[RMDB]
RNA sequence: GGGAACGACUCGAGUAGAGUCGAAAACGGCGCGAUAUUUAUCGGGGAGAAGAAAAUUCUGCGAUUGUCCAAGAUCUUAUUAAUGAGUUUGUCAAUCAAGAGAUUAUUGCCGGUGGGCAGCGUUUGGAUCGAACAGUUGAUUCGUCAACUGUUCGAUAAAAGAAACAACAACAACAAC
Reactivity to 2A3 in 0.01 (KOAc 150mM, MgCl2 10mM, bicine 150mM(pH8.5), 24C), signal-to-noise 2, nucleotides 027 to 126: c010g040g000c010g010c010g020a000u030a060u160u150u040a060u080c010g000g000g070g000a100g070a110a000g070a000a130a040a060u050u010c010u020g140c060g030a030u030u020g000u030c010c010a040a000g010a120u020c010u030u130a120u130u110a220a160u140g030a040g030u120u130u030g040u020c000a020a010u010c000a020a010g050a030g020a120u030u060a030u120u190g170c030c020g000g010u070g000g000g040c020a040g010c000g020u050u090u130g080g010
Reactivity to DMS in 0.01 (KOAc 150mM, MgCl2 10mM, bicine 150mM(pH8.5), 24C), signal-to-noise 2, nucleotides 027 to 126: c070g000g000c050g010c040g000a070u000a110u010u010u000a030u000c040g020g000g000g000a120g000a110a130g010a060a070a030a110u000u000c020u010g010c280g010a030u000u000g000u020c140c050a040a070g010a060u010c000u010u010a130u020u010a050a130u000g010a060g010u000u010u010g020u000c040a030a050u000c050a080a160g000a040g010a030u000u000a080u000u010g030c080c050g000g020u010g000g030g010c040a050g000c080g020u010u010u000g020g000
The record gives the reactivity of an RNA of 177 nucleotides to 2A3 and DMS. DMS adducts were read by reverse transcription with MarathonRT. The RNA was probed in 150 mM KOAc, 10 mM MgCl2 and 150 mM bicine (pH 8.5) at 24 C. It was measured as part of the RMDB library OK2TST.